[RMDB]
RNA sequence: GGGAACGACUCGAGUAGAGUCGAAAAUUCUACACGCUCAUAGUGGAUGAAGAGGUAGGAAAACACCUGACGAAGUCUUGGAUAGAUUACAAAGUAAAUGUUAUAGUAGCCGUGGGAAUACAAGAGGACUGAUGUCCAAUUUCGAUUGGACAUCAGUAAAAGAAACAACAACAACAAC
Reactivity to DMS in 0.01 (KOAc 150mM, MgCl2 10mM, bicine 150mM(pH8.5), 24C), signal-to-noise 3, nucleotides 027 to 126: u000u010c000u000a070c030a080c140g010c170u010c040a080u000a140g030u000g020g020a090u000g010a090a140g000a060g020g000u000a060g010g000a070a100a100a070c120a060c030c040u000g010a090c050g000a110a110g020u000c030u000u000g000g010a140u000a040g000a120u010u000a070c060a030a060a120g010u000a050a070a090u010g010u000u000a070u010a110g000u010a080g020c110c050g030u030g020g000g000a100a080u010a080c080a040a060g000a120g010g010
Reactivity to 2A3 in 0.01 (KOAc 150mM, MgCl2 10mM, bicine 150mM(pH8.5), 24C), signal-to-noise 2, nucleotides 027 to 126: u020u010c000u030a060c030a030c040g010c000u030c030a090u140a080g070u060g120g040a060u050g030a120a050g080a010g020g070u060a050g020g100a090a100a000a000c030a040c050c010u070g030a040c030g070a050a020g000u000c010u030u060g070g000a040u050a190g070a050u040u170a100c050a030a120a020g060u100a010a180a110u110g000u040u080a090u060a100g080u110a010g040c030c050g040u010g030g000g000a040a020u030a020c060a060a050g010a020g140g010